[RMDB]
RNA sequence: GGGAACGACUCGAGUAGAGUCGAAAACGUAAAGAAGAAUCACUGUGACCGACGAGCUGGCGCCGUGUCAAGACAUCAGUGAGCUUUGACAUAAGGAGGCAGAUGCAAGGGGAUCGUUGCUAGUGUAGCAUUAAUCGUAUUUCGAUACGAUUAAUGCAAAAGAAACAACAACAACAAC
Reactivity to DMS in 0.01 (KOAc 150mM, MgCl2 10mM, bicine 150mM(pH8.5), 24C), signal-to-noise 6, nucleotides 027 to 126: c090g010u040a060a100a110g000a060a050g010a120a090u020c030a050c030u020g010u030g000a090c060c040g010a060c060g010a170g010c020u000g010g010c030g010c020c020g010u020g000u000c010a040a040g010a080c100a090u020c070a070g000u010g000a070g000c020u010u000u030g000a060c050a050u020a100a130g000g010a060g000g010c030a040g010a080u010g000c060a060a090g020g000g000g010a090u010c070g010u000u000g010c020u000a060g010u010g010u010a120
Reactivity to 2A3 in 0.01 (KOAc 150mM, MgCl2 10mM, bicine 150mM(pH8.5), 24C), signal-to-noise 9, nucleotides 027 to 126: c040g050u130a060a070a060g130a050a020g050a050a120u070c020a020c060u040g040u060g100a060c020c060g030a050c040g020a030g040c030u040g050g020c030g000c010c010g040u050g010u050c020a020a020g070a070c030a060u160c040a070g080u050g130a030g030c010u060u050u090g050a030c030a040u120a070a100g060g010a030g020g020c020a020g020a090u080g010c040a040a050g040g010g010g010a030u080c040g020u020u030g010c040u060a050g050u020g060u130a020